RNA sequence: GGGAACGACUCGAGUAGAGUCGAAAAGAUAUGGAUUGUUUCUUACCACCGACAAUGAUGUCGGAAACGAUUGAGUCGUUGGUAAGAGAACAAUCCUAAGUCAAAGAAUCACCUUCGGGUGAUUCAAGAUAAACAACUAGUUCGCUAGUUGUUUAUCAAAAGAAACAACAACAACAAC
Reactivity to 2A3 in 0.01 (KOAc 150mM, MgCl2 10mM, bicine 150mM(pH8.5), 24C), signal-to-noise 5, nucleotides 027 to 126: g020a030u070a050u160g000g000a000u000u010g000u000u000u010c000u000u010a000c000c010a010c010c020g010a010c010a090a300u270g080a040u140g060u030c000g010g000a040a040a000c000g010a000u020u070g040a010g030u000c000g000u000u000g000g000u010a010a010g000a010g010a010a000c000a000a000u000c000c000u010a110a010g050u010c040a110a030a170g000a010a000u000c000a010c010c000u030u080c300g170g000g000u000g000a000u010u000c000a000a000
Reactivity to DMS in 0.01 (KOAc 150mM, MgCl2 10mM, bicine 150mM(pH8.5), 24C), signal-to-noise 8, nucleotides 027 to 126: g000a040u010a300u010g000g000a010u000u000g000u000u000u000c000u000u000a000c000c000a030c050c000g000a020c000a110a140u010g020a140u000g000u010c000g000g000a030a060a150c000g010a010u000u000g000a140g010u000c000g010u000u000g000g000u000a000a010g000a030g010a010a010c010a010a000u000c000c000u000a020a080g000u000c040a120a140a180g000a010a010u000c000a000c000c000u000u010c190g020g000g020u000g000a000u000u000c000a070a080

Source: RMDB library TTRDEL, as collected in RNAgym. Structure probing data (2A3 and DMS) for a 177-nucleotide construct. The DMS profile rests on 13,873 reads. Values cover nucleotides 27 to 126.